Structure probing data (2A3 and DMS) for a 177-nucleotide construct. The RNA was probed in 150 mM KOAc, 10 mM MgCl2 and 150 mM bicine (pH 8.5) at 24 C. DMS adducts were read by reverse transcription with MarathonRT.
RNA sequence: GGGAACGACUCGAGUAGAGUCGAAAAACGGGCAGUGGCGAUGGCAACGCGGCAGCCGCAGGGUCGACUUCUUCGCAGCCGCAACAGACGGGCGACGGGCAAAGAGGGGUACUCGUUCUGUUGGAAGCAGCAUCCAUUAUUUCGAUAAUGGAUGCUGAAAAGAAACAACAACAACAAC
Reactivity to 2A3 in 0.01 (KOAc 150mM, MgCl2 10mM, bicine 150mM(pH8.5), 24C), signal-to-noise 5, nucleotides 027 to 126: a000c040g010g030g000c030a050g030u060g060g010c040g060a080u090g050g000c030a050a040c070g010c010g040g000c020a010g030c030c020g000c040a050g030g020g010u070c010g020a070c020u070u040c000u060u050c060g000c040a030g030c010c020g010c010a020a020c010a030g040a020c010g020g010g030c030g030a070c050g050g000g000c050a050a100a030g070a050g030g010g000g010u030a030c010u020c050g050u140u020c030u030g010u000u010g020g010a090a000g030
Reactivity to DMS in 0.01 (KOAc 150mM, MgCl2 10mM, bicine 150mM(pH8.5), 24C), signal-to-noise 3, nucleotides 027 to 126: a070c060g000g000g000c060a060g040u030g000g000c110g020a090u020g030g020c080a050a090c120g000c020g000g010c070a120g000c050c030g010c090a060g000g000g000u010c030g020a060c120u000u000c080u000u030c120g000c080a130g000c010c040g000c030a080a040c080a050g030a050c070g000g000g000c080g020a110c090g020g000g000c110a040a080a040g000a150g010g000g010g000u010a090c060u000c020g010u020u000c040u000g010u020u010g010g000a110a070g010
Source: RMDB library OK1LIB, as collected in RNAgym.